Chemical mapping of a 177-nucleotide RNA with DMS and 2A3.
For 2A3 the reverse transcriptase was SuperScript II with manganese.
The reactions ran in a buffer of 150 mM KOAc, 10 mM MgCl2 and 150 mM bicine (pH 8.5), at 24 C.
[RMDB]
RNA sequence: GGGAACGACUCGAGUAGAGUCGAAAAGAUAUGGACGAAGCUCGAUAAGCAUAGGUCGGAAACGACCUGAUGCUUUUGACGAGCUAGUCCUAAGUCAAACAUCCAAGCUGUUCGCAGCUUGGAUGAAGUGAUUCGCUAAGUUCGCUUAGCGAAUCACAAAAGAAACAACAACAACAAC
Reactivity to DMS in 0.01 (KOAc 150mM, MgCl2 10mM, bicine 150mM(pH8.5), 24C), signal-to-noise 2, nucleotides 027 to 126: g010a030u010a210u020g000g010a020c000g010a180a130g000c000u010c010g010a120u020a030a000g000c000a010u000a040g010g000u000c010g010g010a060a040a070c020g000a000c010c000u000g000a000u000g030c000u000u000u000u010g000a160c020g000a000g000c010u010a100g030u000c000c000u000a030a070g000u010c020a080a120a300c020a000u000c000c000a000a000g010c000u000g010u000u000c200g010c010a020g000c000u000u000g000g000a000u000g010a030a110
Reactivity to 2A3 in 0.01 (KOAc 150mM, MgCl2 10mM, bicine 150mM(pH8.5), 24C), signal-to-noise 2, nucleotides 027 to 126: g030a000u040a020u040g000g000a000c010g040a070a020g000c010u000c000g220a280u070a300a000g010c030a010u020a010g000g000u020c020g010g030a050a010a010c010g000a000c020c020u030g040a000u000g000c000u030u080u070u190g150a000c000g010a000g000c020u000a020g000u000c000c000u000a050a000g010u000c030a020a020a120c010a010u020c000c000a000a000g030c000u050g060u150u160c300g000c200a020g000c000u000u010g020g020a000u010g000a000a000